[RMDB]
RNA sequence: GGGAACGACUCGAGUAGAGUCGAAAAUCCUAGGCAUCGUUCCUCCAUCCGAUGUCGAAGCAAUGGCGCAGUCUUAGGCAUCGGCGGUGUCGAAGCAAUGGCGUAGACCUCAGGCACCGAACAUGUACAGGUAAUAAGUGUUCGCACUUAUUACCUGAAAAGAAACAACAACAACAAC
Reactivity to 2A3 in 0.01 (KOAc 150mM, MgCl2 10mM, bicine 150mM(pH8.5), 24C), signal-to-noise 5, nucleotides 027 to 126: u020c020c000u030a040g060g110c030a080u030c020g000u000u010c000c010u000c020c000a060u020c010c000g010a000u000g010u000c000g010a010a020g010c050a030a190u190g180g020c110g000c100a030g070u110c020u010u020a020g010g000c000a000u010c000g010g010c000g020g010u000g000u000c000g010a010a010g020c030a010a060u300g030g000c080g140u140a070g040a130c000c000u020c040a020g010g010c000a000c010c010g000a040a030c030a020u080g020u070a070
Reactivity to DMS in 0.01 (KOAc 150mM, MgCl2 10mM, bicine 150mM(pH8.5), 24C), signal-to-noise 5, nucleotides 027 to 126: u000c000c000u000a090g010g020c160a170u000c010g000u000u010c010c010u000c070c060a160u010c020c000g010a020u010g010u000c010g000a040a020g000c080a120a100u000g010g000c070g030c090a130g010u010c010u000u000a110g000g000c000a010u000c000g010g010c030g010g000u000g010u010c000g010a130a080g000c040a120a050u010g000g010c010g020u000a090g000a170c010c010u000c030a070g010g000c010a010c010c000g020a070a070c210a060u010g020u010a200

Source information
An RNA of 177 nucleotides, treated with 2A3 and DMS and read out base by base. For DMS the reverse transcriptase was MarathonRT. The data come from the RNA Mapping Database (RMDB), library VIROID. Conditions: 150 mM KOAc, 10 mM MgCl2 and 150 mM bicine (pH 8.5), 24 C.